Background: Structure probing data (2A3 and DMS) for a 177-nucleotide construct. DMS adducts were read by reverse transcription with MarathonRT.

RNA sequence: GGGAACGACUCGAGUAGAGUCGAAAAAGCCUAUGUACGCAUAGGCAAGUGUGCAUUUGCAGGAACUUGUGAGUCUCCUAUUGAAAAUAGACAGGAGACUGACAAGUUCCCGGGAACACCCACAAAAGGUAACAAUGAACUUCGGUUCAUUGUUACCAAAAGAAACAACAACAACAAC
Reactivity to 2A3 in 0.01 (KOAc 150mM, MgCl2 10mM, bicine 150mM(pH8.5), 24C), signal-to-noise 4, nucleotides 027 to 126: a000g000c000c000u000a010u000g020u020a040c270g000c190a020u010a000g000g000c030a030a030g060u020g010u010g010c120a110u040u040u250g100c050a050g010g000a000a000c000u000u000g000u020g050a000g000u000c000u000c000c010u060a140u080u090g120a050a040a070a130u160a040g130a050c070a020g000g010a000g000a010c000u000g000a000c000a000a000g010u000u000c000c000c000g000g000g020a000a020c010a020c040c020c010a060c040a030a110a020a020
Reactivity to DMS in 0.01 (KOAc 150mM, MgCl2 10mM, bicine 150mM(pH8.5), 24C), signal-to-noise 2, nucleotides 027 to 126: a080g010c020c000u010a000u010g000u060a090c200g000c000a010u000a000g000g000c000a070a010g000u010g000u020g000c160a090u010u020u010g000c060a160g000g000a020a000c000u020u000g010u000g010a000g000u000c020u000c000c000u000a140u010u000g000a080a030a110a200u050a180g000a060c100a020g010g000a010g000a010c010u000g000a000c000a000a010g000u010u000c030c020c030g030g040g040a090a060c040a060c090c000c060a070c210a060a070a180a080